[RMDB]
RNA sequence: GGGAACGACUCGAGUAGAGUCGAAAAAGGCAAUUGGCAAGGCCCAGAGGGAUUCCACAAACUGGCAAGGAGUGUCUGCUUAUACAGAGACCACUAGCUCUGUUUCAGAACCUAAGACUAGGAUUGUAAUCAAGGAUGCUAUCAAGGUGCUUAGCACCCAUUUUACAAAGUUCGCUUUGUAAAAUGGAAAAGAAACAACAACAACAAC
Reactivity to DMS in 0.01 (KOAc 150mM, MgCl2 10mM, bicine 150mM(pH8.5), 24C), signal-to-noise 4, nucleotides 027 to 156: a080g020g020c030a080a120u000u000g030g020c010a070a110g020g040c030c020c030a100g010a110g010g010g020a140u010u000c030c040a110c070a030a070a080c020u010g020g030c020a090a130g010g000a100g010u000g010u000c010u000g020c070u000u000a140u000a040c020a030g010a070g020a090c030c060a060c070u000a130g010c010u000c080u000g010u000u010u010c050a090g000a030a100c020c010u010a100a090g010a090c060u000a040g000g010a110u000u010g010u000a060a100u010c060a080a110g020g010a090u000g010c020u010a070u000c040a060a120g020g020u000g000c030u010u010a100g010c030a090c060
Reactivity to 2A3 in 0.01 (KOAc 150mM, MgCl2 10mM, bicine 150mM(pH8.5), 24C), signal-to-noise 6, nucleotides 027 to 156: a010g080g000c050a070a070u090u070g030g010c030a040a030g030g010c010c030c040a010g050a050g050g050g010a060u090u030c050c010a040c040a050a100a040c070u040g010g000c040a060a090g030g010a050g040u070g050u040c010u030g040c030u090u040a040u020a090c020a000g020a020g040a140c010c100a100c150u040a040g020c000u000c010u010g000u000u040u040c040a020g010a040a010c020c010u060a110a020g040a070c030u030a020g020g090a060u030u100g050u110a060a060u080c030a050a000g060g010a020u050g000c010u020a020u140c030a050a090g020g010u030g020c020u090u070a020g000c000a030c000

Chemical mapping of a 207-nucleotide RNA with DMS and 2A3.
Reactivities are given for positions 27 through 156.
Conditions: 150 mM KOAc, 10 mM MgCl2 and 150 mM bicine (pH 8.5), 24 C.
Source: RMDB library OK3TST, as collected in RNAgym.
Reactivities are rounded to 0.1 and cut off at 0 and 3.
For DMS, 9,658 sequencing reads were counted.
The 2A3 profile rests on 6,227 reads.
For 2A3 the reverse transcriptase was SuperScript II with manganese.